Structure probing data (DMS) for a 177-nucleotide construct. Reactivities are given for positions 27 through 126. The RNA was probed in 150 mM KOAc, 10 mM MgCl2 and 150 mM bicine (pH 8.5) at 24 C.
[RMDB]
RNA sequence: GGGAACGACUCGAGUAGAGUCGAAAAGGCGCUCCCUUCGGGGAGCGCCAAACCUGUCAAGGGAGUCAGGAAAUCCCUUAAGUGUGCAGUCCACACGACUGAAAAGGGCGAUGUUCGCAUCGCCCAAUCAAAUGAAAUUGUUCGCAAUUUCAUUUGAAAAAGAAACAACAACAACAAC
Reactivity to DMS in 0.01 (KOAc 150mM, MgCl2 10mM, bicine 150mM(pH8.5), 24C), signal-to-noise 1, nucleotides 027 to 126: g090g070c030g000c030u000c020c020c030u000u000c220g040g060g140g020a000g000c140g130c000c000a000a020a030c020c000u020g000u000c090a060a060g000g000g030a060g010u020c100a050g050g000a100a110a090u000c010c000c000u000u000a090a100g010u010g020u000g000c050a120g000u000c100c010a030c030a090c150g000a030c030u020g000a040a060a090a150g010g000g000c000g010a000u000g000u000u010c160g020c000a020u000c010g010c010c010c000a000a000